[RMDB]
RNA sequence: GGGAACGACUCGAGUAGAGUCGAAAAUGGAUCAGGCCGUCCCGCUGGCUUCUGACUCAUGGACUAACGCUACGGGAGUGAGCAUCUUCGACGGCCAGCUUCAGAUCGCCAUCGGCACGAAUUCCAAUCCUCGAGUACCAUUCGUGGUACUCGAGGAAAAAGAAACAACAACAACAAC
Reactivity to 2A3 in 0.01 (KOAc 150mM, MgCl2 10mM, bicine 150mM(pH8.5), 24C), signal-to-noise 1, nucleotides 027 to 126: u080g020g020a040u070c090a040g000g000c010c020g020u040c060c020c000g070c020u020g050g000c000u030u040c000u050g080a130c030u080c240a110u160g100g000a030c030u090a190a000c150g050c090u070a030c020g000g000g000a000g000u050g070a020g060c010a050u010c030u280u240c110g070a070c020g010g030c000c000a000g000c000u000u040c010a040g000a150u060c050g040c010c020a080u090c050g000g030c060a030c080g030a050a120u110u020c000c040a010a060
Reactivity to DMS in 0.01 (KOAc 150mM, MgCl2 10mM, bicine 150mM(pH8.5), 24C), signal-to-noise 2, nucleotides 027 to 126: u000g020g010a020u000c130a120g000g020c060c020g000u000c070c050c070g000c120u000g010g000c010u010u000c000u000g000a150c070u010c130a070u000g010g010a150c090u000a080a250c210g000c030u000a090c060g010g000g040a090g010u000g020a020g000c050a080u000c060u000u050c150g000a080c070g010g000c050c000a020g000c040u000u000c080a040g000a060u000c100g000c030c020a070u000c090g010g020c060a060c060g000a120a120u060u000c020c010a100a260